[RMDB]
RNA sequence: GGGAACGACUCGAGUAGAGUCGAAAAGAGCAUGGCAGAGGAGCUCCGGCUUGGGAGGCAGUCACGAGCAGCCCUCACUGACCUGAUUACAAAAGCCGCAGGGUCAUCAAAGGACUAUACCCAAGGGACGUCUGAGAAACUUCGGUUUCUCAGACGUAAAAGAAACAACAACAACAAC
Reactivity to DMS in 0.01 (KOAc 150mM, MgCl2 10mM, bicine 150mM(pH8.5), 24C), signal-to-noise 1, nucleotides 027 to 126: g020a020g000c050a040u000g010g010c110a000g040a070g000g040a090g000c050u020c030c080g010g030c030u010u000g040g020g020a090g020g020c070a080g030u000c060a010c140g020a090g020c080a080g010c080c020c010u010c080a080c160u000g010a090c060c020u000g000a090u000u000a150c170a030a070a080a100g010c050c070g010c070a120g010g000g020u000c030a010u000c120a000a060a070g000g000a030c020u000a070u000a140c020c010c020a090a150g000g000g000